[RMDB]
RNA sequence: GGGAACGACUCGAGUAGAGUCGAAAACCUCUACAACUCUCUUUUAUUUUGGAGAAAUGAAGUGGAUUUCUACUCUUUGAUUGGAGAAAAAAAGUGGAUUUCUAUUUUUUUCAAUCAAAGGGAGUUGCACAAACAUUCUUUUCGAAGAAUGUUUGUGAAAAGAAACAACAACAACAAC
Reactivity to DMS in 0.01 (KOAc 150mM, MgCl2 10mM, bicine 150mM(pH8.5), 24C), signal-to-noise 1, nucleotides 027 to 126: c010c020u030c090u050a130c010a040a030c090u030c000u000c010u000u040u020u030a050u020u050u070u000g020g010a020g000a090a090a080u000g000a140a060g030u030g010g020a090u020u000u000c000u000a090c000u000c020u000u000u000g000a050u020u060g020g000a100g010a000a000a010a000a030a120a010g010u000g030g000a050u020u010u000c000u000a000u000u000u000u000u000u000u010c000a030a000u020c100a000a000a020g050g000g000a040g000u000u000g030
Reactivity to 2A3 in 0.01 (KOAc 150mM, MgCl2 10mM, bicine 150mM(pH8.5), 24C), signal-to-noise 6, nucleotides 027 to 126: c000c010u020c020u120a070c020a030a020c010u010c000u010c010u020u040u060u060a140u090u150u110u130g080g020a070g020a040a050a040u180g060a120a030g050u050g030g030a000u020u030u000c010u020a040c000u010c000u070u040u060g110a150u090u230g200g040a120g020a080a050a020a020a030a010a000g020u030g040g040a040u020u060u020c000u010a060u000u000u010u010u010u000u010c010a000a000u000c010a010a000a000g000g000g000a000g000u010u040g010